[RMDB]
RNA sequence: GGGAACGACUCGAGUAGAGUCGAAAAGAUAUGGAAACACGCGAGUACAGAGAUGUUCGGAAACGAAUACAUCGACGAAGUACUCGUUUCCUAAGUCAAAAGCAUCUUCUCUUCGGAGAAGAUGCAACAAACCUUGGAACUUCGGUUCCAAGGUUUGAAAAGAAACAACAACAACAAC
Reactivity to 2A3 in 0.01 (KOAc 150mM, MgCl2 10mM, bicine 150mM(pH8.5), 24C), signal-to-noise 1, nucleotides 027 to 126: g040a030u170a010u210g040g000a010a080a030c040a010c170g250c080g030a020g020u000a040c020a020g050a000g020a080u010g020u000u010c000g040g070a050a080a010c020g030a010a050u220a130c040a010u020c000g290a260c040g080a210a000g000u000a000c000u000c020g000u010u040u000c030c010u060a110a040g050u050c030a030a090a040a090g010c000a000u010c000u000u030c010u000c000u020u140c300g060g000a000g020a010a000g000a010u000g040c020a010a010
Reactivity to DMS in 0.01 (KOAc 150mM, MgCl2 10mM, bicine 150mM(pH8.5), 24C), signal-to-noise 2, nucleotides 027 to 126: g040a080u000a300u010g010g000a010a040a070c150a120c230g030c110g000a000g010u010a020c000a060g010a130g010a000u000g020u010u010c020g000g000a070a050a140c010g010a050a040u000a060c020a010u000c000g020a120c220g000a120a060g050u000a010c000u010c000g020u000u000u000c000c000u000a050a120g000u020c030a040a010a130a070g010c000a000u000c000u000u000c000u000c020u000u000c200g040g000a000g020a030a010g000a000u010g020c010a010a020
Conditions: 150 mM KOAc, 10 mM MgCl2 and 150 mM bicine (pH 8.5), 24 C. An RNA of 177 nucleotides, treated with 2A3 and DMS and read out base by base. Source: RMDB library TTRDEL, as collected in RNAgym.